[RMDB]
RNA sequence: GGGAACGACUCGAGUAGAGUCGAAAAGUAGAAUCGGUCAAGCAAAACCCCAAAACCUUACACUGAGAGCAUUUAGCCUGAUUACUCUUUAAAUCAAAUCAGGCAAUAGAGAGAAACUCGAGAGGUGAAACGGGAGUAAUGUUCGCAUUACUCCCAACAGUAUCAUCAAGUUCGCUUGAUGAUACUGAAAAGAAACAACAACAACAAC
Reactivity to 2A3 in 0.01 (KOAc 150mM, MgCl2 10mM, bicine 150mM(pH8.5), 24C), signal-to-noise 6, nucleotides 027 to 156: g060u070a040g050a110a060u080c070g020g020u080c070a040a040g030c040a040a070a110a190c020c010c010c040a050a100a050a070c030c040u080u120a060c080a040c120u120g050a010g000a000g040c020a050u040u040u070a040g000c010c000u000g000a010u010u050a060c010u040c040u130u290u170a060a080a060u200c090a030a000a020u000c000a000g000g000c000a000a000u010a000g020a000g010a000g020a040a080a030c020u010c020g060a060g000a010g090g050u060g030a110a070a060c110g000g010g000a000g000u000a000a000u000g010u030u040c060g010c020a000u000u000a000c000u000c010c000c000a000a000
Reactivity to DMS in 0.01 (KOAc 150mM, MgCl2 10mM, bicine 150mM(pH8.5), 24C), signal-to-noise 3, nucleotides 027 to 156: g010u000a080g040a060a060u000c030g010g030u000c040a090a150g010c030a060a040a070a110c040c020c000c020a070a090a090a080c050c020u000u000a070c060a070c060u000g010a060g010a040g030c000a300u000u010u000a120g000c000c000u000g000a040u000u000a080c050u000c060u000u000u010a040a050a050u010c060a050a110a030u000c000a000g010g000c010a040a020u000a070g000a100g010a170g000a080a070a070c040u000c030g000a070g020a090g010g020u000g010a070a080a060c090g010g030g010a030g030u000a020a010u000g010u010u000c240g030c010a030u000u000a010c010u000c000c000c000a000a000

Conditions: 150 mM KOAc, 10 mM MgCl2 and 150 mM bicine (pH 8.5), 24 C. This 207-nucleotide RNA was probed chemically with 2A3 and DMS. Reactivities are given for positions 27 through 156. It was measured as part of the RMDB library M2RFPK. For 2A3 the reverse transcriptase was SuperScript II with manganese. Values are in units of 0.01, from 0 to 300, in steps of 10. For DMS, 8,156 sequencing reads were counted. High 2A3 reactivity points to a flexible backbone, as in loops and unpaired stretches.